[RMDB]
RNA sequence: GGGAACGACUCGAGUAGAGUCGAAAAGGACCCAGCUUCGGCUGGGUCCAAAGAGAUAGUACCUAUUGAGUUCCUGUGUAGGUACUCAUGACAGGAUGUCAAAAAGUAUGGACUUCGGUCCAUACAACAUAUGCGAUCAGUUCGCUGAUCGCAUAUGAAAAGAAACAACAACAACAAC
Reactivity to 2A3 in 0.01 (KOAc 150mM, MgCl2 10mM, bicine 150mM(pH8.5), 24C), signal-to-noise 2, nucleotides 027 to 126: g010g000a010c010c010c000a010g030c020u040u050c250g160g000c010u000g000g010g030u050c010c000a010a000a000g000a000g000a030u070a080g010u020a000c000c000u010a010u010u090g060a040g010u020u020c020c010u020g030u060g040u080a000g000g000u010a010c000u010c010a080u100g000a010c000a010g190g150a270u210g050u080c030a070a030a000a080a000g010u000a010u010g010g020a010c010u030u050c250g040g000u000c000c000a000u000a000c000a000a000
Reactivity to DMS in 0.01 (KOAc 150mM, MgCl2 10mM, bicine 150mM(pH8.5), 24C), signal-to-noise 3, nucleotides 027 to 126: g000g030a010c000c000c000a000g030c010u010u010c180g010g020c010u000g010g000g010u000c000c000a020a030a090g000a130g010a110u010a030g010u000a020c000c000u000a030u000u000g000a110g010u000u010c000c000u000g020u000g000u000a010g010g010u000a010c000u000c140a070u010g000a050c080a140g020g000a130u010g020u010c010a080a060a090a110a120g010u000a000u000g010g000a000c000u000u030c160g020g010u000c000c000a000u000a000c000a080a130
The record gives the reactivity of an RNA of 177 nucleotides to 2A3 and DMS.
The reactions ran in a buffer of 150 mM KOAc, 10 mM MgCl2 and 150 mM bicine (pH 8.5), at 24 C.
2A3 adducts were read by reverse transcription with SuperScript II with manganese.